[RMDB]
RNA sequence: GGGAACGACUCGAGUAGAGUCGAAAAUCCUAAGUCAUUUGUGGGCGACUUCGUUGAAGAUGGUUGUCAGAAUCGGAAACGAUUCUUGGAUUUACCAUUGGAGAAGUCGGCGGAAACAAAUGAUAUGGAAAAAGGAGUCAGGUUCGCCUGACUCCAACUGUGUGAUAGCGUUCGCGCUAUCACACAGAAAAGAAACAACAACAACAAC
Reactivity to 2A3 in 0.01 (KOAc 150mM, MgCl2 10mM, bicine 150mM(pH8.5), 24C), signal-to-noise 2, nucleotides 027 to 156: u000c000c010u020a050a030g000u000c000a000u000u000u000g010u030g040g080g060c000g010a000c040u000u010c040g200u150u060g010a000a020g000a010u000g010g020u000u080g000u010c000a010g010a000a000u000c000g040g000a050a050a100c000g030a020u010u010c030u040u210g120g000a010u170u070u250a040c010c000a000u000u020g010g000a070g000a010a000g000u000c020g020g090c010g030g170a210a060a020c000a000a000a000u000g000a000u030a090u060g030g070a070a060a040a040a090g000g000a000g000u010c000a000g000g090u020u150c170g090c020c000u000g010a000c000u000c020c000a000a010